[RMDB]
RNA sequence: GGGAACGACUCGAGUAGAGUCGAAAAAAGAAAAGAGAGCAACGGGGCUAGCUGCCGGGUGUUCCAUCCAUGGGAUCGGUGCCGAGUGAGGCUUAUCCCGGGGGUGACGCCUCGGUCCUCCCUUAGCCAACACUAAAUAGUUCGCUAUUUAGUGUUGAAAAGAAACAACAACAACAAC
Reactivity to 2A3 in 0.01 (KOAc 150mM, MgCl2 10mM, bicine 150mM(pH8.5), 24C), signal-to-noise 5, nucleotides 027 to 126: a000a010g140a010a060a010a010g060a000g000a000g040c040a030a030c010g010g000g010g000c020u020a010g000c020u090g150c000c000g020g000g000u050g030u150u080c020c010a010u000c050c030a160u220g160g000g010a030u070c140g040g040u060g000c000c010g010a060g120u210g090a080g000g000c000u050u110a060u070c000c000c010g000g000g010g000g000u030g000a020c090g010c010c000u020c000g010g010u030c000c000u020c000c000c000u010u030a030g040c020
Reactivity to DMS in 0.01 (KOAc 150mM, MgCl2 10mM, bicine 150mM(pH8.5), 24C), signal-to-noise 8, nucleotides 027 to 126: a060a080g000a080a070a040a030g000a030g000a030g020c120a090a080c060g010g000g000g010c030u000a300g010c030u000g000c010c010g000g010g020u000g010u010u000c030c010a040u000c060c070a160u010g010g010g010a020u000c170g030g010u010g020c000c010g000a140g010u010g000a150g010g010c060u010u010a070u000c010c000c010g010g000g000g010g010u000g000a090c180g000c000c000u000c000g010g000u000c300c010u000c000c010c000u000u000a100g010c120
The record gives the reactivity of an RNA of 177 nucleotides to 2A3 and DMS.
For DMS, 12,511 sequencing reads were counted.
It was measured as part of the RMDB library VIROID.
DMS adducts were read by reverse transcription with MarathonRT.
Values cover nucleotides 27 to 126.
The RNA was probed in 150 mM KOAc, 10 mM MgCl2 and 150 mM bicine (pH 8.5) at 24 C.